[RMDB]
RNA sequence: GGGAACGACUCGAGUAGAGUCGAAAAGCUGAAAAUGAUUUAUGGGUAGUGGAAUAGGUUAACCGUAAGACCAUUGGUUGAAAAACUAUGAAAUUAAGCCUCAGAUAUUUUAUCUUUGGUUACGGGAAAAAUCAUUUACCGUUCGCGGUAAAUGAAACAAAACACAUACGUUCGCGUAUGUGUUUUGAAAAGAAACAACAACAACAAC
Reactivity to DMS in 0.01 (KOAc 150mM, MgCl2 10mM, bicine 150mM(pH8.5), 24C), signal-to-noise 1, nucleotides 027 to 156: g010c060u010g010a030a100a080a080u020g000a100u000u000u010a080u000g000g000g000u000a060g050u020g000g000a080a220u010a050g050g060u000u000a060a110c000c000g030u000a080a160g040a080c030c000a070u000u000g010g020u000u000g010a060a080a130a040a040c060u010a080u030g000a150a070a080u000u000a090a220g010c060c060u010c140a020g000a080u000a030u020u000u000u020a020u010c010u000u000u010g010g020u000u000a030c020g000g060g010a030a040a020a100a120u000c010a010u000u000u000a010c020c000g010u000u010c300g060c040g020g010u000a010a000a000u000g000a000a030a080
Reactivity to 2A3 in 0.01 (KOAc 150mM, MgCl2 10mM, bicine 150mM(pH8.5), 24C), signal-to-noise 3, nucleotides 027 to 156: g020c030u060g060a020a040a060a090u080g070a080u080u100u220a100u140g030g000g040u050a050g010u060g070g060a130a080u050a150g030g000u050u060a060a040c000c010g020u000a070a030g030a040c020c020a010u020u050g040g000u000u060g020a030a000a020a020a000c050u070a060u110g030a040a080a050u090u080a090a050g010c000c010u000c010a000g070a050u040a100u110u260u120u120a020u030c000u020u030u050g000g020u010u020a010c020g070g000g000a000a110a050a000a100u030c000a000u000u020u010a000c000c000g000u010u010c270g000c010g050g000u000a010a000a000u000g000a000a000a000
The record gives the reactivity of an RNA of 207 nucleotides to DMS and 2A3. The DMS profile rests on 2,854 reads. For DMS the reverse transcriptase was MarathonRT. Source: RMDB library M2RFPK, as collected in RNAgym. 2A3 adducts were read by reverse transcription with SuperScript II with manganese.